Notes:
The record gives the reactivity of an RNA of 177 nucleotides to DMS and 2A3. For 2A3 the reverse transcriptase was SuperScript II with manganese. The 2A3 profile rests on 1,669 reads. The RNA was probed in 150 mM KOAc, 10 mM MgCl2 and 150 mM bicine (pH 8.5) at 24 C. As a SHAPE reagent, 2A3 marks flexible, mostly unpaired nucleotides at the ribose 2'-OH. Source: RMDB library OK2TST, as collected in RNAgym.
RNA sequence: GGGAACGACUCGAGUAGAGUCGAAAAGAAAGGUGUCUGCGACAGAGGUACUUGAUUUACUUGUUGAACAUGAGUUGGCCUUUCCGAGCGAAUUUUUUGAAGAGUUGUCGAAUUUAUCAUUCUCUGAUAAUAGUGAUAUGUUCGCAUAUCACUAUUAAAAAGAAACAACAACAACAAC
Reactivity to DMS in 0.01 (KOAc 150mM, MgCl2 10mM, bicine 150mM(pH8.5), 24C), signal-to-noise 6, nucleotides 027 to 126: g010a070a070a060g020g010u000g020u000c020u000g020c060g010a150c160a060g000a070g000g010u010a030c070u010u000g010a120u010u010u000a040c060u000u000g010u000u010g010a160a080c080a050u000g010a080g010u000u000g010g020c030c020u000u000u010c040c060g010a190g020c070g000a030a010u000u000u000u010u020u010g010a070a140g000a120g000u000u000g010u000c040g020a070a070u000u000u010a050u020c070a100u000u000c040u000c020u010g010a200
Reactivity to 2A3 in 0.01 (KOAc 150mM, MgCl2 10mM, bicine 150mM(pH8.5), 24C), signal-to-noise 2, nucleotides 027 to 126: g040a000a020a010g020g010u030g020u010c030u060g040c030g030a020c020a040g210a060g170g030u020a030c000u050u100g110a150u160u060u080a060c030u080u040g030u050u070g070a090a030c020a070u110g030a060g160u110u080g150g010c000c000u040u000u000c020c040g010a040g080c030g070a090a050u130u130u020u030u190u300g080a090a030g050a020g050u050u080g040u060c020g010a080a050u110u110u050a100u190c060a040u000u090c050u020c010u030g020a020